Source: RMDB library OK1LIB, as collected in RNAgym. This 177-nucleotide RNA was probed chemically with DMS and 2A3. Values are in units of 0.01, from 0 to 300, in steps of 10. The RNA was probed in 150 mM KOAc, 10 mM MgCl2 and 150 mM bicine (pH 8.5) at 24 C. For DMS the reverse transcriptase was MarathonRT. The 2A3 profile rests on 860 reads.

RNA sequence: GGGAACGACUCGAGUAGAGUCGAAAAGACGGAAAAGAUCGAACCUAAGAAGAUCAGGAAAUGUGAUCCGAAUCCUAGGGCUCCUAGGGACGCAUCGUCCGAUGCGAAAUAAACACUAACGUCGAAAAGGCCAUAUACCUUUCGAGGUAUAUGGCCUAAAAGAAACAACAACAACAAC
Reactivity to DMS in 0.01 (KOAc 150mM, MgCl2 10mM, bicine 150mM(pH8.5), 24C), signal-to-noise 1, nucleotides 027 to 126: g030a030c010g010g000a060a020a050a080g000a010u000c030g070a070a180c090c050u010a200a250g000a220a130g000a000u000c020a020g040g030a090a090a110u040g070u000g040a060u000c010c100g050a070a060u110c020c000u010a000g080g030g000c170u000c000c020u050a000g000g000g020a080c040g000c000a000u000c000g000u090c220c100g000a060u050g000c000g000a000a010a000u030a000a090a000c070a030c130u000a070a150c060g020u020c010g000a020a080a000
Reactivity to 2A3 in 0.01 (KOAc 150mM, MgCl2 10mM, bicine 150mM(pH8.5), 24C), signal-to-noise 1, nucleotides 027 to 126: g030a040c020g010g010a000a000a110a000g030a060u100c080g070a180a100c090c050u080a070a000g080a060a030g000a040u020c060a010g070g100a000a050a050u300g000u010g020a140u010c070c070g030a000a050u060c000c000u000a000g000g070g110c080u080c130c020u070a000g000g000g000a020c000g000c000a000u000c000g190u130c030c170g000a000u000g000c040g000a010a000a000u200a000a050a000c010a000c000u010a130a020c000g000u000c000g060a010a020a020